[RMDB]
RNA sequence: GGGAACGACUCGAGUAGAGUCGAAAAGUAUUGCCAUCCCACUGGCUCGUCUCGCCCAAAAUAUGGCGUUCUGUUUCAGAUACAUCUUUCCUGAUUGCUUCGCUGUCUGUAAACUCUGAACUGUCAGAAAUCACUACAUCUUCGGAUGUAGUGAUUUAAAAGAAACAACAACAACAAC
Reactivity to DMS in 0.01 (KOAc 150mM, MgCl2 10mM, bicine 150mM(pH8.5), 24C), signal-to-noise 7, nucleotides 027 to 126: g010u000a060u010u000g020c040c030a090u000c030c010c010a150c200u000g010g010c010u000c060g000u000c020u000c080g000c010c020c070a080a080a080a110u020a100u010g010g010c060g010u010u010c030u000g000u000u010u000c020a030g000a080u010a070c100a080u000c050u000u000u000c040c020u000g010a100u010u000g010c060u000u000c040g000c080u000g000u010c030u010g010u010a040a050a060c060u000c100u010g010a030a070c090u010g010u000c050a080g010
Reactivity to 2A3 in 0.01 (KOAc 150mM, MgCl2 10mM, bicine 150mM(pH8.5), 24C), signal-to-noise 4, nucleotides 027 to 126: g030u040a130u080u190g030c020c010a060u050c010c000c020a010c050u040g020g030c000u020c030g050u010c020u030c030g050c000c010c020a060a090a040a040u290a110u070g030g000c000g000u040u010c020u040g060u020u030u060c020a010g000a030u030a060c030a070u020c040u070u090u050c020c030u080g060a120u090u120g040c050u070u060c030g010c050u020g030u060c000u010g070u080a010a070a060c020u030c050u060g050a070a060c040u110g060u060c010a010g140
The record gives the reactivity of an RNA of 177 nucleotides to DMS and 2A3. It was measured as part of the RMDB library OK2TST. The 2A3 profile rests on 5,313 reads. Values cover nucleotides 27 to 126.